[RMDB]
RNA sequence: GGGAACGACUCGAGUAGAGUCGAAAAUAGCAUGACAUGCAUGACACUCGAUCGAUCACACUAGUCAUGACCAUGCCAUGUGUACUCGAUCAGUGAUGCUAGAGUACUAGCUAGGGUACACACAUGGGCACGAGUCUCCAUUCGUGGAGACUCGUGCAAAAGAAACAACAACAACAAC
Reactivity to 2A3 in 0.01 (KOAc 150mM, MgCl2 10mM, bicine 150mM(pH8.5), 24C), signal-to-noise 1, nucleotides 027 to 126: u110a030g070c020a000u030g070a040c000a070u030g050c030a020u000g010a010c000a010c040u090c040g070a140u060c030g040a040u010c160a010c020a000c110u120a120g110u000c010a050u040g030a050c010c010a000u000g000c050c090a030u050g010u000g020u010a030c020u010c030g080a130u200c140a150g130u070g120a050u240g120c010u000a000g010a030g120u120a130c000u010a020g030c000u030a030g050g000g000u010a010c030a000c000a000c010a030u000g020g000
Reactivity to DMS in 0.01 (KOAc 150mM, MgCl2 10mM, bicine 150mM(pH8.5), 24C), signal-to-noise 1, nucleotides 027 to 126: u020a050g000c020a000u030g020a080c070a220u000g010c040a300u000g000a020c050a080c080u020c130g010a100u000c030g000a100u000c030a050c050a080c050u030a150g090u010c060a020u000g000a210c110c020a060u000g000c080c100a100u030g000u000g000u000a000c040u000c000g020a070u040c210a150g000u050g030a130u010g000c000u030a000g000a290g050u010a070c000u000a000g000c000u000a200g010g000g030u000a000c000a050c030a070c170a060u000g000g000